[RMDB]
RNA sequence: GGGAACGACUCGAGUAGAGUCGAAAAGAUAUGGAUCGUGCGGGAGUUGAAUAAUCGGAAACGAUUAAACAACGAAGAACGCACGAGUCCUAAGUCAAAGAGUGUCCCUCUUCGGAGGGACACUCAACAUAGAGAGGGUCUUCGGACCCUCUCUAUGAAAAGAAACAACAACAACAAC
Reactivity to DMS in 0.01 (KOAc 150mM, MgCl2 10mM, bicine 150mM(pH8.5), 24C), signal-to-noise 2, nucleotides 027 to 126: g000a000u010a040u020g000g010a110u010c000g030u000g000c000g030g000g000a030g030u010u000g010a100a200u000a000a000u000c010g010g000a030a010a030c010g010a010u000u000a020a050a230c010a000a010c000g010a100a110g000a130a200c000g000c010a000c000g000a000g020u000c000c000u000a020a090g010u000c010a080a100a140g000a030g010u000g000u000c000c000c010u010c000u000u010c230g020g010a030g000g000g000a000c000a000c000u000c000a010a100